Chemical mapping of a 207-nucleotide RNA with DMS and 2A3.
Source: RMDB library OK3TST, as collected in RNAgym.
For DMS the reverse transcriptase was MarathonRT.
Conditions: 150 mM KOAc, 10 mM MgCl2 and 150 mM bicine (pH 8.5), 24 C.
RNA sequence: GGGAACGACUCGAGUAGAGUCGAAAAGAACGAGCAAGCCGGAUGGGAAAGCAUGCUCCGAGGCUCGAACAAUAUCUCCAUCCGAAACGUACGGGAGCUAAUUGGCGUACGGAAACCAUCCCGACACAGAUCGUGCCUCGCCGCCGUACGGAAACCAUGAAGAAGAGACAUUCGUGUCUCUUCUUCAAAAAGAAACAACAACAACAAC
Reactivity to DMS in 0.01 (KOAc 150mM, MgCl2 10mM, bicine 150mM(pH8.5), 24C), signal-to-noise 1, nucleotides 027 to 156: g020a080a110c000g040a050g080c040a050a090g030c060c000g000g000a060u000g010g040g000a170a060a090g010c040a080u010g010c010u000c020c030g000a250g030g030c040u000c020g010a090a110c060a100a120u010a130u000c070u000c020c010a040u000c010c040g010a100a100a070c030g040u000a030c030g040g000g040a040g050c070u000a110a180u000u010g010g020c020g010u000a150c010g010g000a100a080a070c020c030a130u000c060c040c000g010a070c030a060c030a230g060a120u010c120g010u010g000c000c010u020c070g040c060c000g020c000c010g000u040a000c000g000g020a090a060a080c160c030a130
Reactivity to 2A3 in 0.01 (KOAc 150mM, MgCl2 10mM, bicine 150mM(pH8.5), 24C), signal-to-noise 2, nucleotides 027 to 156: g020a060a020c050g020a010g010c020a050a000g040c030c010g000g030a010u020g020g000g070a090a040a050g090c090a080u100g020c000u030c000c010g020a060g080g000c040u050c010g040a050a050c060a110a000u110a120u100c010u060c000c000a060u000c010c010g060a160a110a020c070g000u040a010c000g000g030g040a050g000c100u100a080a100u060u110g020g010c040g010u100a040c040g010g030a090a020a000c030c010a060u050c000c000c010g030a020c010a000c000a090g070a120u070c000g030u050g000c010c010u010c040g000c020c010g000c010c000g000u000a000c000g000g010a040a060a010c100c050a020